[RMDB]
RNA sequence: GGGAACGACUCGAGUAGAGUCGAAAAGAUAUGGAUUCUUCUUUUGACGGAUCCAUAUCGGAAACGAUAUGUGAUCCGAUAAGAAGAUCCUAAGUCAAAUCACUACAAUGUUCGCAUUGUAGUGAAACCAUAAGCUUUCGUUCGCGAAAGCUUAUGGAAAAGAAACAACAACAACAAC
Reactivity to DMS in 0.01 (KOAc 150mM, MgCl2 10mM, bicine 150mM(pH8.5), 24C), signal-to-noise 3, nucleotides 027 to 126: g000a030u000a260u010g010g000a010u000u010c010u000u000c000u000u010u000u000g000a180c130g010g000a000u000c010c000a000u000a010u000c000g020g010a080a090a120c010g010a030u000a010u000g000u010g010a020u000c000c000g020a110u000a010a010g010a020a010g010a030u000c000c010u010a050a140g010u000c040a040a120a180u000c000a000c000u000a010c000a000a010u000g020u000u020c250g010c010a000u000u000g020u000a010g000u000g000a000a050a130
Reactivity to 2A3 in 0.01 (KOAc 150mM, MgCl2 10mM, bicine 150mM(pH8.5), 24C), signal-to-noise 3, nucleotides 027 to 126: g010a010u030a020u140g010g010a030u300u070c020u020u000c000u080u130u130u190g300a210c120g000g000a000u000c000c000a000u000a000u000c000g000g030a000a010a000c010g000a010u000a000u030g230u250g010a000u000c010c030g030a020u040a000a000g020a010a010g010a000u000c000c000u010a150a010g020u020c030a040a040a200u060c000a010c000u010a000c000a010a010u020g030u030u060c220g010c170a010u010u000g000u000a000g000u010g010a070a000a000